[RMDB]
RNA sequence: GGGAACGACUCGAGUAGAGUCGAAAACUUCGGGAGGAGUUUGAGUUGUCAAAUCUACUAACAGUUCGCGAUCUGGUCGUUCAGGUACCGGCGCGAGACAUCACCAUCAUAAACCGUGUCAGUUUCUGCUACCAUGGGAGUUCGCUCCCAUGGUAGCAAAAGAAACAACAACAACAAC
Reactivity to 2A3 in 0.01 (KOAc 150mM, MgCl2 10mM, bicine 150mM(pH8.5), 24C), signal-to-noise 1, nucleotides 027 to 126: c050u120u040c110g080g060g010a180g070g000a070g010u000u090u040g140a050g030u040u210g120u040c030a120a120a020u050c000u170a090c060u160a290a070c070a140g020u040u040c000g000c080g150a100u190c000u060g000g000u000c010g000u060u170c040a020g000g070u030a000c010c010g010g000c010g000c000g000a000g080a000c000a010u100c030a010c010c000a040u040c040a040u130a040a140a050c000c080g040u010g170u180c050a170g000u000u020u040c000u000
Structure probing data (2A3) for a 177-nucleotide construct.
The RNA was probed in 150 mM KOAc, 10 mM MgCl2 and 150 mM bicine (pH 8.5) at 24 C.
For 2A3 the reverse transcriptase was SuperScript II with manganese.